[RMDB]
The record gives the reactivity of an RNA of 177 nucleotides to DMS and 2A3. Values cover nucleotides 27 to 126.

RNA sequence: GGGAACGACUCGAGUAGAGUCGAAAAGCCAGGGGCGAUGCACGCUGUAGAGCGACACGAGAAACGCCCGGCAAUCAGGCCGGGUCCGGGCCAAGUUCUCUACGGAACUUGCGUAGCAGCAGCGCUGGCCUGGAUGCUAUUUCGAUAGCAUCCAGGCAAAAGAAACAACAACAACAAC
Reactivity to DMS in 0.01 (KOAc 150mM, MgCl2 10mM, bicine 150mM(pH8.5), 24C), signal-to-noise 2, nucleotides 027 to 126: g040c040c040a090g010g000g020g020c030g040a190u020g000c080a080c060g050c000u080g050u000a080g000a080g010c090g010a080c010a030c200g000a070g000a060a110a060c130g000c000c000c000g000g000c060a230a140u010c250a120g000g000c040c030g010g000g000u040c040c050g000g000g000c050c030a090a060g000u020u000c010u000c010u040a040c140g030g080a040a050c220u000u010g000c080g140u010a080g000c030a040g000c040a010g030c010g010c110u010g000
Reactivity to 2A3 in 0.01 (KOAc 150mM, MgCl2 10mM, bicine 150mM(pH8.5), 24C), signal-to-noise 2, nucleotides 027 to 126: g060c010c020a030g050g000g070g020c010g050a030u060g020c010a010c080g000c020u070g060u080a050g000a040g040c090g050a070c000a010c140g140a090g060a060a160a000c020g000c000c000c000g000g020c010a030a070u140c040a030g150g000c000c010g010g000g010u010c040c040g090g030g000c050c010a000a020g000u010u000c020u010c010u070a080c090g010g070a040a060c020u050u100g000c000g020u040a020g000c040a020g000c020a000g000c010g000c070u060g050